[RMDB]
RNA sequence: GGGAACGACUCGAGUAGAGUCGAAAACACUAGCUUUCGAAGCUGUACCUGAGAGUCAAAGCUCACGAUUUGACAGCAAACAAAGCUAGUGAAUGCUGCGACUCAGGGAUACCUAGCAGAGCUAGAAGAUAGUGUUUAAUUUCGAUUGGACACUAUCAAAAGAAACAACAACAACAAC
Reactivity to 2A3 in 0.01 (KOAc 150mM, MgCl2 10mM, bicine 150mM(pH8.5), 24C), signal-to-noise 9, nucleotides 027 to 126: c020a000c000u000a000g000c010u060u080u080c080g170a190a020g000c020u020g010u030a050c010c010u110g020a110g000a010g280u100c070a060a040a010g020c000u010c010a020c030g070a060u070u050u170g120a090c080a020g030c010a060a110a070c040a050a070a010g020c020u020a010g000u000g000a010a010u100g010c010u020g010c010g020a020c010u000c040a020g020g010g020a070u060a100c010c020u020a020g010c020a020g010a010g030c010u030a020g010a090a010
Reactivity to DMS in 0.01 (KOAc 150mM, MgCl2 10mM, bicine 150mM(pH8.5), 24C), signal-to-noise 9, nucleotides 027 to 126: c020a140c010u000a000g000c010u000u000u020c050g010a240a140g000c050u010g020u000a060c070c030u000g000a100g000a050g010u020c120a080a300a090g010c000u000c010a010c120g010a140u020u030u030g000a070c100a050g010c080a040a090a230c300a020a020a030g000c040u000a080g010u000g000a040a050u030g010c020u000g000c300g000a040c040u000c020a300g000g000g010a110u010a050c070c060u010a080g010c050a200g000a070g000c040u000a040g000a090a080
The data come from the RNA Mapping Database (RMDB), library OK1LIB. Structure probing data (2A3 and DMS) for a 177-nucleotide construct. For 2A3 the reverse transcriptase was SuperScript II with manganese. The RNA was probed in 150 mM KOAc, 10 mM MgCl2 and 150 mM bicine (pH 8.5) at 24 C. Reactivities are given for positions 27 through 126.